[RMDB]
RNA sequence: GGGAACGACUCGAGUAGAGUCGAAAAGAUAUGGACUACUUGGACCUUGAGAGCUGUUUCGGAAACGAAACUGCUCAAUGAUGGCUAGUAGUCCUAAGUCAAACAUUACACGUUCGCGUGUAAUGAAGUAAGCGUAUACCUUCGGGUAUACGCUUACAAAAGAAACAACAACAACAAC
Reactivity to 2A3 in 0.01 (KOAc 150mM, MgCl2 10mM, bicine 150mM(pH8.5), 24C), signal-to-noise 3, nucleotides 027 to 126: g000a000u020a000u040g010g000a000c030u020a010c040u150u300g300g150a300c020c050u200u300g100a050g000a020g040c030u010g020u000u020u000c000g010g000a020a000a000c000g000a010a010a010c000u010g060c000u000c000a000a000u250g030a030u090g010g000c010u000a000g000u000a000g000u000c000c000u000a010a000g000u000c000a010a020a050c010a000u000u030a000c020a000c010g050u080u090c300g010c000g120u010g000u000a010a000u010g020a090a010
Reactivity to DMS in 0.01 (KOAc 150mM, MgCl2 10mM, bicine 150mM(pH8.5), 24C), signal-to-noise 1, nucleotides 027 to 126: g020a010u000a000u000g000g000a000c000u000a000c010u010u020g020g000a160c000c000u020u010g000a120g000a010g030c000u000g000u020u000u000c000g000g000a010a000a020c000g000a020a000a000c020u000g010c000u000c000a080a010u010g010a000u010g000g000c000u000a010g000u000a000g010u000c000c000u000a000a040g000u000c010a160a150a210c000a020u000u000a000c000a000c000g040u000u010c300g020c000g040u000g000u000a010a000u000g000a050a090
The record gives the reactivity of an RNA of 177 nucleotides to 2A3 and DMS.
The RNA was probed in 150 mM KOAc, 10 mM MgCl2 and 150 mM bicine (pH 8.5) at 24 C.
DMS adducts were read by reverse transcription with MarathonRT.